Structure probing data (2A3 and DMS) for a 177-nucleotide construct. As a SHAPE reagent, 2A3 marks flexible, mostly unpaired nucleotides at the ribose 2'-OH. The RNA was probed in 150 mM KOAc, 10 mM MgCl2 and 150 mM bicine (pH 8.5) at 24 C.
[RMDB]
RNA sequence: GGGAACGACUCGAGUAGAGUCGAAAAUAGAAACGUUUCCAAGUGAUCAGCCUCUCUGGAAAUGCUUCAUGCCGCGUUAGAAAAACGACGAGCUCCCAGGUUACUGCCAAAUUUGCGAUAAAACGGGAGCUCCUAGAGGAUUCGUCCUCUAGGAGCUAAAAGAAACAACAACAACAAC
Reactivity to 2A3 in 0.01 (KOAc 150mM, MgCl2 10mM, bicine 150mM(pH8.5), 24C), signal-to-noise 3, nucleotides 027 to 126: u140a040g010a000a050a000c000g000u000u030u000c020c000a040a060g080u040g030a070u120c060a020g090c020c010u000c020u010c030u000g000g040a000a000a040u040g000c010u010u000c000a050u090g020c000c020g080c020g030u000u050a170g120a140a090a080a010a000c030g220a060c000g000a020g000c000u000c000c000c010a020g040g000u030u080a110c030u040g050c050c010a040a140a110u090u100u120g100c070g020a090u060a150a110a020a020c020g060g010g010
Reactivity to DMS in 0.01 (KOAc 150mM, MgCl2 10mM, bicine 150mM(pH8.5), 24C), signal-to-noise 2, nucleotides 027 to 126: u050a050g020a060a020a090c010g000u010u000u000c000c020a040a160g020u000g010a050u010c120a120g000c210c140u000c040u000c020u000g000g000a010a000a070u010g010c010u000u000c010a090u010g000c000c010g010c040g000u020u000a080g030a080a060a080a050a020c050g020a080c090g000a110g050c070u000c000c000c000a090g020g010u000u010a070c070u020g000c010c180a030a040a110u080u000u010g000c020g010a150u050a030a050a070a090c170g000g000g000